RNA sequence: GGGAACGACUCGAGUAGAGUCGAAAAGAUAGACACGGAAGACUCAGAAGCAUGGUGGAGGUAUCAGAGGGACAUGGAUAAUGAGAAAUUACUUAAUGGGUACAAUGUACAGUAUUCCAAUGAUAGGUAGUACACUAGUCACCACUACACAAUAUAAGACUAAUUUAGCGUUCGCGCUAAAUUAGUCAAAAGAAACAACAACAACAAC
Reactivity to DMS in 0.01 (KOAc 150mM, MgCl2 10mM, bicine 150mM(pH8.5), 24C), signal-to-noise 1, nucleotides 027 to 156: g010a170u010a160g030a090c020a210c040g090g000a030a050g000a080c010u020c100a060g020a090a070g020c110a040u010g020g010u000g000g000a020g010g010u000a070u000c090a030g000a170g060g000g020a070c050a120u000g010g000a000u000a070a200u000g010a120g030a100a080a160u000u000a060c030u010u030a050a100u000g000g020g060u000a050c030a060a060u000g020u000a080c070a220g050u000a110u000u010c050c060a030a220u000g020a110u000a030g010g030u000a130g040u000a100c000a050c080u000a070g020u010c080a010c000c010a050c030u000a040c060a020c080a040a070u000a050u030a050a200
Reactivity to 2A3 in 0.01 (KOAc 150mM, MgCl2 10mM, bicine 150mM(pH8.5), 24C), signal-to-noise 4, nucleotides 027 to 156: g040a050u110a040g050a010c020a000c090g020g020a030a000g030a050c020u020c060a050g040a040a010g040c060a050u100g040g010u030g000g050a040g010g050u050a070u130c030a000g000a040g050g000g010a000c020a050u040g020g000a000u020a150a040u120g020a010g050a040a130a010u130u080a010c020u050u100a070a050u060g010g050g000u010a020c040a040a090u080g020u120a060c010a020g050u050a040u160u150c020c000a060a090u130g090a010u030a070g040g010u010a020g010u020a020c000a000c030u030a040g010u030c020a010c070c010a010c040u180a000c050a010c030a050a050u300a040u300a180a030
This 207-nucleotide RNA was probed chemically with DMS and 2A3. Reactivities are given for positions 27 through 156. DMS adducts were read by reverse transcription with MarathonRT. 2A3 adducts were read by reverse transcription with SuperScript II with manganese.